Chemical mapping of a 177-nucleotide RNA with DMS and 2A3. The RNA was probed in 150 mM KOAc, 10 mM MgCl2 and 150 mM bicine (pH 8.5) at 24 C. For 2A3 the reverse transcriptase was SuperScript II with manganese. The 2A3 profile rests on 2,166 reads.
RNA sequence: GGGAACGACUCGAGUAGAGUCGAAAAGAUAUGGACGCUCCACGAUGGACGAUGAAAUCGGAAACGAUGGAGUCUAAGUGGAGGCGUCCUAAGUCAAAAGAGAUGAUGCGUUCGCGCAUCAUCUCAACUUCCAUAUCGUCUUCGGACGAUAUGGAAGAAAAGAAACAACAACAACAAC
Reactivity to DMS in 0.01 (KOAc 150mM, MgCl2 10mM, bicine 150mM(pH8.5), 24C), signal-to-noise 2, nucleotides 027 to 126: g030a010u000a300u000g010g000a000c000g000c000u000c000c000a000c000g000a250u020g000g020a020c010g000a100u000g020a060a070a030u000c000g030g010a170a080a200c010g010a010u000g000g010a100g020u000c000u010a090a220g000u000g000g000a010g010g030c000g000u000c000c000u000a000a050g000u020c020a060a060a100a110g010a000g010a000u000g010a010u000g010c000g020u000u010c300g000c010g030c000a000u010c020a010u000c000u000c000a020a110
Reactivity to 2A3 in 0.01 (KOAc 150mM, MgCl2 10mM, bicine 150mM(pH8.5), 24C), signal-to-noise 2, nucleotides 027 to 126: g020a020u080a060u120g020g000a010c010g030c010u030c000c030a020c060g130a210u300g050g050a010c050g030a140u040g060a050a050a020u000c010g010g020a090a030a020c020g000a000u030g040g060a010g010u000c010u020a210a000g000u000g040g000a010g020g000c030g000u000c000c000u010a040a000g000u000c020a040a000a030a150g010a020g020a000u030g000a000u020g020c000g020u070u130c280g000c010g000c140a020u010c000a000u030c000u000c000a000a000